The record gives the reactivity of an RNA of 177 nucleotides to 2A3 and DMS. The data come from the RNA Mapping Database (RMDB), library RFMREP. The RNA was probed in 150 mM KOAc, 10 mM MgCl2 and 150 mM bicine (pH 8.5) at 24 C. DMS (dimethyl sulfate) methylates the pairing face of unpaired adenines and cytosines. For 2A3, 4,624 sequencing reads were counted.
[RMDB]
RNA sequence: GGGAACGACUCGAGUAGAGUCGAAAAACAGGUUUAAAAAACUUGAAUACGUGGCCAUCCAACUGAAUCAGUGAUGAAACACCAGCAGCUAUGGUUGAUAGGGAUAUCGGCAGUUAGCUGUAAAUUACAUGCAAAGUAAGUUCGCUUACUUUGCAUGAAAAGAAACAACAACAACAAC
Reactivity to 2A3 in 0.01 (KOAc 150mM, MgCl2 10mM, bicine 150mM(pH8.5), 24C), signal-to-noise 3, nucleotides 027 to 126: a010c010a010g000g070u040u060u130a080a100a000a030a010a000c010u020u010g050a080a040u120a110c060g010u020g020g020c020c000a010u010c020c010a030a060c050u090g060a060a090u120c020a050g020u030g070a030u030g020a050a090a030c050a020c010c020a020g010c000a000g000c000u010a010u030g060g000u030u010g010a000u010a010g070g000g010a030u010a010u040c000g010g000c010a110g060u010u030a010g000c010u010g000u000a010a000a010u010u020a040
Reactivity to DMS in 0.01 (KOAc 150mM, MgCl2 10mM, bicine 150mM(pH8.5), 24C), signal-to-noise 3, nucleotides 027 to 126: a150c020a010g000g010u000u010u010a000a110a110a090a060a010c000u000u020g010a140a050u010a090c180g010u000g000g010c080c000a020u000c020c020a070a040c050u000g010a120a100u000c040a130g010u000g000a000u010g000a080a070a100c050a080c030c090a130g000c010a010g020c010u000a030u010g000g010u000u000g000a020u000a020g000g020g010a210u000a010u000c010g010g020c020a020g000u000u000a020g010c010u000g000u010a020a050a070u000u010a140